[RMDB]
Conditions: 150 mM KOAc, 10 mM MgCl2 and 150 mM bicine (pH 8.5), 24 C. This 177-nucleotide RNA was probed chemically with 2A3 and DMS. The DMS profile rests on 6,023 reads. For 2A3 the reverse transcriptase was SuperScript II with manganese. DMS adducts were read by reverse transcription with MarathonRT. Source: RMDB library OK2TRN, as collected in RNAgym.

RNA sequence: GGGAACGACUCGAGUAGAGUCGAAAAUUGCCGCUGAUGGUGAUCUGGUUUGGUAUUGGUGAAACCUCGAAGAUCUUACUGAUCUAUUUAGCGAUUUUUGCACCGGUGGCGAUGUCGGCGCUGGCGGUAACUGUCUGAUGUUCGCAUCAGACAGUUAAAAAGAAACAACAACAACAAC
Reactivity to 2A3 in 0.01 (KOAc 150mM, MgCl2 10mM, bicine 150mM(pH8.5), 24C), signal-to-noise 3, nucleotides 027 to 126: u080u060g020c010c000g000c050u040g040a070u120g020g090u030g040a070u020c030u080g050g070u090u060u050g070g040u070a050u070u080g120g000u080g050a120a040a030c010c010u010c000g040a040a010g010a040u000c010u000u170a150c120u130g030a020u020c010u040a140u110u160u080a060g030c010g020a010u080u020u010u070u240g080c030a020c050c050g040g070u030g000g000c020g020a030u070g030u050c030g000g040c010g020c020u020g020g010c020g010g000
Reactivity to DMS in 0.01 (KOAc 150mM, MgCl2 10mM, bicine 150mM(pH8.5), 24C), signal-to-noise 4, nucleotides 027 to 126: u010u000g010c050c020g030c050u010g010a070u010g000g000u010g010a060u010c030u000g000g010u000u000u010g010g010u010a240u000u000g000g020u000g010a070a050a110c080c050u000c070g000a080a040g000a010u000c000u000u010a110c230u000g000a010u000c050u000a150u010u010u000a100g010c060g000a060u000u000u000u010u010g000c060a050c050c030g030g010u000g010g000c050g000a080u000g020u000c070g010g000c020g010c020u010g010g020c010g010g000